This 177-nucleotide RNA was probed chemically with 2A3 and DMS. For DMS, 1,092 sequencing reads were counted. Reactivities are given for positions 27 through 126. The data come from the RNA Mapping Database (RMDB), library OK1LIB. The 2A3 profile rests on 544 reads.
[RMDB]
RNA sequence: GGGAACGACUCGAGUAGAGUCGAAAAAGGCUGGAGUGCACUAGUGUGGUCAUAGCUCAUUGUAGCCUCAAACAGCUAGGCUCAAACAGUCCUCUUGUGUCAUCCUCCUGAGUAGCUGGGACUAUAGAACGGGAUCACACUUCGGUGUGAUCCCGUUAAAAGAAACAACAACAACAAC
Reactivity to 2A3 in 0.01 (KOAc 150mM, MgCl2 10mM, bicine 150mM(pH8.5), 24C), signal-to-noise 1, nucleotides 027 to 126: a000g080g000c000u010g040g000a040g000u060g000c040a040c090u030a030g030u100g040u060g100g000u040c080a260u040a010g000c000u000c020a150u040u130g070u110a030g000c040c000u000c040a100a100a040c070a030g000c010u010a000g000g010c000u000c050a230a230a020c020a030g020u070c000c000u010c000u030u020g080u000g020u060c040a000u090c000c010u060c000c030u000g000a030g080u030a000g000c050u000g030g030g000a060c000u030a000u080a250g140
Reactivity to DMS in 0.01 (KOAc 150mM, MgCl2 10mM, bicine 150mM(pH8.5), 24C), signal-to-noise 1, nucleotides 027 to 126: a170g000g010c010u000g000g000a150g120u000g040c080a000c020u000a040g030u000g020u000g020g050u080c070a190u030a180g000c060u000c090a120u060u000g010u080a010g130c040c080u000c300a070a110a100c160a100g000c000u020a060g000g080c000u050c060a060a060a200c110a030g000u000c000c000u000c000u030u000g000u000g000u000c000a200u000c000c000u000c060c000u000g000a020g000u000a080g020c000u020g010g050g000a080c120u000a060u000a040g040